[RMDB]
RNA sequence: GGGAACGACUCGAGUAGAGUCGAAAAAAGAACCAGGAACACCCCAAGAAGAGGAGACUUCCCCAAGGGUAGGUGGAACGCCAGGGAACAAGGAAAUAGGAGAAGGAACGGUAGAAAAGAGCGAGCCAGACACAUGCCUUCGGGCAUGUGAAAAGAAACAACAACAACAAC
Reactivity to 2A3 in 0.01 (KOAc 150mM, MgCl2 10mM, bicine 150mM(pH8.5), 24C), signal-to-noise 3, nucleotides 027 to 129: a010a020g150a050a060c030c010a000g000g060a080a030c060a040c030c000c000c000a030a020g050a020a000g040a030g010g010a030g030a000c000u090u070c000c000c000c000a100a140g060g000g020u040a090g050g050u100g010g000a030a000c020g020c060c000a010g090g040g000a040a020c030a040a020g060g000a020a040a010u090a040g000g000a030g010a050a000g030g000a070a000c090g010g020u130a070g080a010a070a040a000g040a000g020c000g010a000g000c020c010a050g030a050
Reactivity to DMS in 0.01 (KOAc 150mM, MgCl2 10mM, bicine 150mM(pH8.5), 24C), signal-to-noise 4, nucleotides 027 to 129: a010a020g010a070a110c030c070a100g050g050a000a000c090a130c020c030c020c020a100a090g020a070a000g020a010g030g030a070g020a120c110u010u020c010c000c040c110a090a090g030g040g050u030a040g000g000u030g010g040a000a120c120g040c000c020a090g120g010g020a060a110c120a010a000g040g000a040a040a020u040a070g050g010a060g010a070a020g040g010a020a070c150g010g010u050a100g010a060a030a100a060g010a020g020c000g020a120g000c120c030a070g040a150

An RNA of 170 nucleotides, treated with 2A3 and DMS and read out base by base. For 2A3 the reverse transcriptase was SuperScript II with manganese. The RNA was probed in 150 mM KOAc, 10 mM MgCl2 and 150 mM bicine (pH 8.5) at 24 C. The DMS profile rests on 8,440 reads.